[RMDB]
RNA sequence: GGGAACGACUCGAGUAGAGUCGAAAAGGGCGAUGAUGUUGUUCAGCUGCAGCAUCAACUCCAGGAGCUGGGCUUUUACACCGAUCGUGUCGAUGGCCGCUUUGGCGAGCUGACCUACACGUCGUUACGGUACUUCUUCUUUCGAGAAGAAGUACCGAAAAGAAACAACAACAACAAC
Reactivity to DMS in 0.01 (KOAc 150mM, MgCl2 10mM, bicine 150mM(pH8.5), 24C), signal-to-noise 2, nucleotides 027 to 126: g010g010g030c050g000a070u010g000a080u000g000u000u000g020u000u020c070a080g010c120u000g000c050a040g000c010a080u000c050a080a100c080u000c070c090a120g020g010a060g000c050u000g000g000g000c050u000u010u000u000a090c050a060c110c100g010a090u000c130g020u000g020u000c130g010a040u000g010g000c010c000g010c040u000u010u020g020g020c090g000a070g020c010u010g030a040c010c040u000a020c010a020c020g010u000c010g020u000u000a130
Reactivity to 2A3 in 0.01 (KOAc 150mM, MgCl2 10mM, bicine 150mM(pH8.5), 24C), signal-to-noise 2, nucleotides 027 to 126: g040g000g010c020g000a020u050g010a070u020g020u050u020g020u020u130c030a040g010c050u110g050c050a020g030c010a070u090c030a060a050c020u020c040c020a050g090g020a040g000c060u160g000g050g000c020u100u070u100u130a010c050a040c000c070g090a160u150c080g020u020g030u060c060g050a060u100g040g000c000c030g000c000u120u030u140g130g000c010g000a020g000c010u050g010a080c000c000u010a010c020a000c020g010u030c010g020u040u080a070

This 177-nucleotide RNA was probed chemically with DMS and 2A3. For DMS the reverse transcriptase was MarathonRT. The RNA was probed in 150 mM KOAc, 10 mM MgCl2 and 150 mM bicine (pH 8.5) at 24 C. Values cover nucleotides 27 to 126. Source: RMDB library OK2TST, as collected in RNAgym.